The record gives the reactivity of an RNA of 207 nucleotides to 2A3.
[RMDB]
RNA sequence: GGGAACGACUCGAGUAGAGUCGAAAAGAUGGGUCCGAUGGAUUAAUGCGUCGCCGGCCAUUGGAUCCUGAUUGAUAGAUUGACGGCGACGGUCGGAUCACUCGGUAAUUCGGUGCUCAACGAGUGAUCCGUGAUGAUAGUUAAGAAGAGCACCUAAGAUCAUGGCUAUCUUCGGAUAGCCAUGAUCAAAAGAAACAACAACAACAAC
Reactivity to 2A3 in 0.01 (KOAc 150mM, MgCl2 10mM, bicine 150mM(pH8.5), 24C), signal-to-noise 1, nucleotides 027 to 156: g190a010u110g000g000g000u000c000c000g000a000u000g000g000a000u010u130a140a000u300g100c060g000u000c000g000c000c000g030g000c000c010a040u000u000g000g000a000u050c000c040u050g110a000u060u300g100a020u050a120g080a020u030u280g060a050c040g000g030c000g000a000c020g000g000u110c000g000g000a000u000c000a000c000u010c000g000g160u110a060a100u220u300c060g000g010u000g040c000u060c050a000a000c000g000a000g000u000g020a020u000c000c000g000u000g010a000u050g000a070u120a100g240u300u080a180a000g030a060a020g000a060g000c000a000c000c000u020a060a030
The RNA was probed in 150 mM KOAc, 10 mM MgCl2 and 150 mM bicine (pH 8.5) at 24 C. For 2A3, 386 sequencing reads were counted.